Conditions: 150 mM KOAc, 10 mM MgCl2 and 150 mM bicine (pH 8.5), 24 C. This 207-nucleotide RNA was probed chemically with 2A3. The 2A3 profile rests on 550 reads. It was measured as part of the RMDB library OK3TST. 2A3 adducts were read by reverse transcription with SuperScript II with manganese.

RNA sequence: GGGAACGACUCGAGUAGAGUCGAAAAACGCGCCAGCUCGAAGCCAUGGCCGAGCGCGAGAAGAAGCUCGGCGCGGCGCGCGGCAAGAUGCAGGCGCUACAGGGUGUCGCCGGCGGCAUGGCGAUUGGCGGUUACGCGGCGCGCUCAACCGGCGCGCGAUCAAACGACAGUUCGCUGUCGUUUGAUCAAAAGAAACAACAACAACAAC
Reactivity to 2A3 in 0.01 (KOAc 150mM, MgCl2 10mM, bicine 150mM(pH8.5), 24C), signal-to-noise 1, nucleotides 027 to 156: a000c030g000c000g000c000c000a040g010c060u000c050g090a190a010g010c010c000a020u030g060g080c020c010g000a010g020c300g000c060g080a020g090a120a060g120a070a010g110c030u030c050g000g000c000g000c000g000g000c060g110c020g000c060g050g000c030a090a120g020a100u280g000c010a040g030g030c000g010c000u010a040c030a050g080g040g000u090g040u090c020g010c000c000g000g110c010g000g040c070a070u120g000g100c060g130a230u090u120g010g020c030g040g000u070u120a030c080g000c050g040g040c020g010c000g020c000u000c030a030a220c040c000g000g000c000g000c000g020c000